[RMDB]
RNA sequence: GGGAACGACUCGAGUAGAGUCGAAAAACAUGUUGAAACCCCGUCUUUACUAAAAAAGUAAAAAAUUAGCGGGACGUGAUGGCACAUGUCUAUAAUCCCAGCUACUUGGGGAGAGGCUGAGGCAGAAACCAUUGAUCUAUUUCGAUAGAUCAAUGGUAAAAGAAACAACAACAACAAC
Reactivity to DMS in 0.01 (KOAc 150mM, MgCl2 10mM, bicine 150mM(pH8.5), 24C), signal-to-noise 4, nucleotides 027 to 126: a040c030a020u000g000u000u000g000a090a080a080c030c010c030c010g010u000c040u000u000u010a050c020u020a000a030a060a100a060a090g000u020a010a030a050a030a100a110u010u010a040g010c200g010g000g000a030c040g010u010g020a030u000g010g010c100a030c060a010u000g010u010c050u000a090u000a090a120u000c010c010c010a100g010c110u020a050c100u000u000g010g020g000g010a080g010a070g010g020c050u010g010a060g010g010c060a100g000a100a090
Structure probing data (DMS) for a 177-nucleotide construct.
Source: RMDB library OK2TST, as collected in RNAgym.
Conditions: 150 mM KOAc, 10 mM MgCl2 and 150 mM bicine (pH 8.5), 24 C.